[RMDB]
RNA sequence: GGGAACGACUCGAGUAGAGUCGAAAAAAUGGGCGCGUGUUGAAGGUAAGGACGGAUUUGUCAGUGUAGAGCUACAACCUCCUUGCAAAUUCUUGAUUGCGGGACCAAAAGGACCUGAAAUCCGAUAGAAUUAUUCCGUGUUCGCACGGAAUAAUUCAAAAGAAACAACAACAACAAC
Reactivity to DMS in 0.01 (KOAc 150mM, MgCl2 10mM, bicine 150mM(pH8.5), 24C), signal-to-noise 1, nucleotides 027 to 126: a080a090u030g010g010g020c100g020c060g040u000g020u000u020g010a120a070g020g000u000a010a010g000g000a020c180g000g010a120u000u000u000g000u000c120a010g000u010g000u010a090g010a170g020c030u000a010c050a010a040c040c010u000c000c000u000u000g020c000a050a110a150u000u000c020u000u010g000a090u010u000g060c050g030g000g010a100c020c030a040a060a070a170g010g000a070c010c020u010g000a040a080a130u000c030c150g000a130u010a150